[RMDB]
RNA sequence: GGGAACGACUCGAGUAGAGUCGAAAAGGUCUAAACAAUUGACGCACCACUACUACAGUCCCAACGACUGAGGGACUCGUCGACUCGGUUAAGAUCGGAAACCGGGUCGAGGUAUAGUGAAUGAGUUCCAAUUCUCCAUUUACGGCAUCUUGUGCGACAACUACUGUCUCUUCGGAGACAGUAGUUGAAAAGAAACAACAACAACAAC
Reactivity to DMS in 0.01 (KOAc 150mM, MgCl2 10mM, bicine 150mM(pH8.5), 24C), signal-to-noise 1, nucleotides 027 to 156: g010g010u000c000u040a060a060a170c070a020a030u000u010g000a040c030g070c040a040c010c020a090c000u000a030c070u010a150c070a030g010u000c010c010c050a140a200c180g040a140c150u000g020a260g040g030g000a010c010u000c040g020u000c020g000a000c010u010c010g010g020u000u010a080a160g000a110u000c110g210g000a070a110a030c000c010g000g010g030u000c000g000a010g010g010u000a090u010a060g000u000g000a080a060u000g000a060g000u000u000c050c050a060a230u000u000c010u000c020c040a170u010u000u000a100c100g010g010c050a100u000c030u000u000g060u010g010c020g020a130
Reactivity to 2A3 in 0.01 (KOAc 150mM, MgCl2 10mM, bicine 150mM(pH8.5), 24C), signal-to-noise 6, nucleotides 027 to 156: g040g020u050c050u120a120a110a020c090a140a170u100u170g050a020c020g010c040a020c010c010a020c040u110a010c010u040a030c030a030g000u000c020c020c030a070a050c070g180a050c050u120g040a140g000g000g000a000c010u000c000g170u000c000g000a000c000u000c010g000g030u000u080a100a050g060a200u180c110g030g050a080a020a000c000c000g000g000g000u000c000g000a000g000g000u090a050u030a110g050u030g040a050a060u090g010a000g070u080u030c030c020a030a080u110u040c030u010c050c040a070u070u070u140a060c050g020g040c030a050u040c040u120u060g020u010g020c010g040a050

An RNA of 207 nucleotides, treated with DMS and 2A3 and read out base by base. For 2A3, 3,675 sequencing reads were counted. The reactions ran in a buffer of 150 mM KOAc, 10 mM MgCl2 and 150 mM bicine (pH 8.5), at 24 C. It was measured as part of the RMDB library PDB130. Reactivities are given for positions 27 through 156.